RNA sequence: GGGAACGACUCGAGUAGAGUCGAAAACAAGCCAUGGGCGGACGGCAGCGGUUCAGCGGGAAGGACGAUCGUUGUGACCGAGGUCGCGUUGCGGGUCGAUGCGGUCGCGAACCCGCUGCUUGAGCGAGAUUUAGCUCGUAUUCGUACGAGCUAAAUCAAAAGAAACAACAACAACAAC
Reactivity to 2A3 in 0.01 (KOAc 150mM, MgCl2 10mM, bicine 150mM(pH8.5), 24C), signal-to-noise 1, nucleotides 027 to 126: c020a050a020g040c020c020a110u120g040g060g030c050g040g010a020c000g030g000c010a020g010c010g050g000u070u050c020a020g000c000g010g000g050a150a030g080g030a040c020g010a020u020c020g030u030u120g140u110g070a010c020c020g050a110g060g140u160c030g000c080g110u070u200g200c040g070g020g000u020c000g010a030u100g050c010g000g010u020c000g000c010g010a010a020c000c020c010g000c010u010g000c000u040u070g040a030g020c050g030a080
Reactivity to DMS in 0.01 (KOAc 150mM, MgCl2 10mM, bicine 150mM(pH8.5), 24C), signal-to-noise 5, nucleotides 027 to 126: c090a110a120g010c040c050a080u000g010g010g010c040g000g010a080c120g000g000c040a050g010c050g010g010u000u000c030a060g020c010g010g000g000a120a100g010g000a140c020g010a030u000c020g010u000u010g010u030g010a060c010c000g020a180g020g000u010c060g010c060g010u000u010g010c020g010g000g010u010c010g000a110u000g000c010g000g000u000c000g010c020g010a120a090c040c010c010g020c000u000g000c080u000u000g000a120g000c060g000a120